[RMDB]
RNA sequence: GGGAACGACUCGAGUAGAGUCGAAAAGGGACUUGAAGGCGGUUUUACAUACUGGUCAGACACGGCUGGAGGCCAAGGUCAAGUUGAAAGUUGCAGUCCAGCCAGCAUGAGAACUGCCAUGCGAGCGUUAGGAGCAUAUCUUCGGAUAUGCUCCUAAAAAAGAAACAACAACAACAAC
Reactivity to DMS in 0.01 (KOAc 150mM, MgCl2 10mM, bicine 150mM(pH8.5), 24C), signal-to-noise 5, nucleotides 027 to 126: g000g020g010a120c010u000u000g000a110a070g000g010c030g010g000u000u000u000u010a130c030a000u010a060c020u000g000g010u000c070a220g000a040c020a300c070g000g000c000u010g000g000a260g010g010c020c100a090a150g000g010u030c140a090a120g010u000u010g000a230a090a030g010u000u000g000c120a100g000u000c000c030a240g000c010c000a030g000c040a010u000g000a100g000a030a020c010u010g000c010c000a030u020g010c010g000a020g000c060g020
Reactivity to 2A3 in 0.01 (KOAc 150mM, MgCl2 10mM, bicine 150mM(pH8.5), 24C), signal-to-noise 3, nucleotides 027 to 126: g070g000g040a090c000u020u020g030a060a040g010g000c010g010g050u010u000u020u030a130c020a010u010a020c010u010g060g000u060c030a010g000a020c010a000c040g030g000c010u010g040g030a010g010g020c030c010a050a060g200g060u180c090a020a030g020u010u020g020a020a020a000g030u020u020g070c140a020g010u000c000c000a020g010c000c010a000g000c000a000u000g000a000g020a020a000c000u020g000c010c000a000u080g010c010g010a000g010c040g010